[RMDB]
RNA sequence: GGGAACGACUCGAGUAGAGUCGAAAAAGCAAUGUAGCAGCAUCAACUAUUUGUCAGACAUCAGGGCCAACACCUUGCUGAUUCAAAGUGCCAACGACCCGAUGAUCCCUCUGUCUGCAUUGCCGGACGCGCCGUAUAAAUUCGUUUAUACGGCGCGAAAAGAAACAACAACAACAAC
Reactivity to 2A3 in 0.01 (KOAc 150mM, MgCl2 10mM, bicine 150mM(pH8.5), 24C), signal-to-noise 2, nucleotides 027 to 126: a000g030c010a000a000u010g010u030a030g030c000a010g020c020a030u070c050a070a120c060u160a180u220u110u140g150u070c040a020g020a080c000a030u070c070a100g060g000g000c020c030a030a000c010a010c010c000u010u020g000c060u170g090a190u150u040c020a060a000a000g010u000g020c020c020a080a030c190g050a040c000c000c000g000a000u010g030a120u050c040c000c000u020c010u020g170u120c000u020g000c010a010u000u030g010c020c020g040g010a030
Reactivity to DMS in 0.01 (KOAc 150mM, MgCl2 10mM, bicine 150mM(pH8.5), 24C), signal-to-noise 2, nucleotides 027 to 126: a180g000c050a020a000u030g010u000a090g010c030a030g030c300a080u010c070a110a050c120u000a100u000u030u000g000u010c120a080g000a080c050a020u000c020a110g000g000g020c020c000a050a150c110a070c010c030u000u000g000c270u010g020a140u000u000c050a060a020a050g000u010g070c060c050a150a080c130g000a020c000c040c050g000a020u010g010a130u000c020c060c090u000c000u000g000u000c010u000g020c040a030u000u000g000c060c030g000g000a140

Structure probing data (2A3 and DMS) for a 177-nucleotide construct. For DMS, 1,082 sequencing reads were counted. The RNA was probed in 150 mM KOAc, 10 mM MgCl2 and 150 mM bicine (pH 8.5) at 24 C. For 2A3 the reverse transcriptase was SuperScript II with manganese.